This 177-nucleotide RNA was probed chemically with 2A3 and DMS. For DMS the reverse transcriptase was MarathonRT. The reactions ran in a buffer of 150 mM KOAc, 10 mM MgCl2 and 150 mM bicine (pH 8.5), at 24 C. For 2A3 the reverse transcriptase was SuperScript II with manganese. The DMS profile rests on 3,985 reads. Source: RMDB library OK1LIB, as collected in RNAgym. Values cover nucleotides 27 to 126.

[RMDB]
RNA sequence: GGGAACGACUCGAGUAGAGUCGAAAAUAAUCCCAUGAUACAAGUGAAUAGAUAAAUUGACAAGUAGUUUGUUAAGAGGAUUAUUUAGUCAGAUAGUAAUAGUAUGAUUUAUGUAGAAAAAAUAUGAAUCGUAUUACUCGUUCGCGAGUAAUACGAUAAAAGAAACAACAACAACAAC
Reactivity to 2A3 in 0.01 (KOAc 150mM, MgCl2 10mM, bicine 150mM(pH8.5), 24C), signal-to-noise 2, nucleotides 027 to 126: u010a010a000u090c000c000c000a010u150g090a070u050a030c010a010a030g070u080g100a010a030u090a050g120a070u230a260a170a170u130u100g050a010c010a070a030g000u010a010g010u000u100u170g040u120u070a220a040g050a120g040g000a000u000u000a000u050u090u030a100g010u020c060a000g050a170u080a020g080u040a060a110u010a100g070u080a080u090g010a080u010u050u070a040u010g020u120a030g220a030a100a000a000a000a010u220a050u230g070a010
Reactivity to DMS in 0.01 (KOAc 150mM, MgCl2 10mM, bicine 150mM(pH8.5), 24C), signal-to-noise 3, nucleotides 027 to 126: u040a100a060u000c000c010c030a150u020g010a140u010a020c030a070a070g010u030g000a120a100u010a110g020a080u010a030a140a150u040u000g000a070c080a030a060g010u000a080g020u010u000u010g020u000u040a100a120g030a210g010g000a030u000u000a000u000u030u000a090g010u000c050a060g000a160u050a040g000u030a060a070u020a110g010u030a020u010g000a100u000u000u000a060u010g000u020a050g010a020a000a030a050a080a030u050a030u020g010a060